[RMDB]
RNA sequence: GGGAACGACUCGAGUAGAGUCGAAAAUGGAUGAAGCUUUUGCUUGCCACACUGGUACCUUGCGCGCAUUGAUUGCCAUCGUGAAGCCGAAGAAGACGGUACUGUGUGGAGACCCGAAGCAGUGCGGGGUCUAAGUGCCAUUCGUGGCACUUAGACCAAAAGAAACAACAACAACAAC
Reactivity to DMS in 0.01 (KOAc 150mM, MgCl2 10mM, bicine 150mM(pH8.5), 24C), signal-to-noise 2, nucleotides 027 to 126: u030g010g010a110u000g020a100a070g000c030u000u010u020u020g010c060u000u010g000c000c000a010c010a020c020u020g010g000u000a010c020c000u000u000g030c090g010c100g050c100a080u000u010g010a080u000u020g020c090c120a160u000c050g010u000g000a100a110g020c050c010g020a100a080g030a120a060g010a070c210g000g000u000a010c000u000g010u000g020u000g000g010a080g000a100c020c000c000g000a080a080g030c050a060g000u020g010c090g010g000
Reactivity to 2A3 in 0.01 (KOAc 150mM, MgCl2 10mM, bicine 150mM(pH8.5), 24C), signal-to-noise 2, nucleotides 027 to 126: u120g060g030a040u100g150a050a070g060c070u190u190u190u190g050c010u000u110g040c000c000a020c010a000c070u090g060g000u030a020c010c050u080u160g080c040g000c010g000c030a050u040u260g030a040u070u190g110c050c070a020u010c010g020u010g110a100a090g020c020c020g030a120a030g090a020a010g110a050c050g000g000u020a000c000u000g020u010g000u000g020g010a010g000a010c010c030c040g000a030a020g040c020a010g070u000g060c070g010g000